[RMDB]
RNA sequence: GGGAACGACUCGAGUAGAGUCGAAAAGAUAUGGAGGCUUAUCAAAUGAGGUGUCCAAUGACGAUGGAUCGGAAACGAUCCAUUAAGACAGGACACUACCCACCAUUGACCACGAGCCUCCUAAGUCAAAAGCAAGGAAUCUUCGGAUUCCUUGCAAGGGAUUUAGUAGGUUCGCCUACUAAAUCCCAAAAGAAACAACAACAACAAC
Reactivity to 2A3 in 0.01 (KOAc 150mM, MgCl2 10mM, bicine 150mM(pH8.5), 24C), signal-to-noise 1, nucleotides 027 to 156: g000a000u010a000u000g010g000a000g010g000c020u020u030a030u090c060a020a010a210u010g020a010g020g010u000g020u000c030c030a090a300u160g060a010c060g000a010u010g000g010a010u000c000g000g000a000a000a000c000g000a000u000c010c000a000u000u000a010a000g070a050c040a000g000g000a020c030a000c000u030a020c040c050c000a080c000c000a020u000u000g020a050c090c000a140c300g010a010g000c010c020u010c000c000u000a000a000g000u000c000a000a040a090a120g020c010a000a010g100g030a000a000u000c000u130u190c270g030g010a010u010u010c000c010u010u000g000c000a000a000
Structure probing data (2A3) for a 207-nucleotide construct. It was measured as part of the RMDB library RNAMAK. For 2A3 the reverse transcriptase was SuperScript II with manganese. 2A3 is a SHAPE reagent: it acylates the 2'-hydroxyl of flexible nucleotides of all four kinds.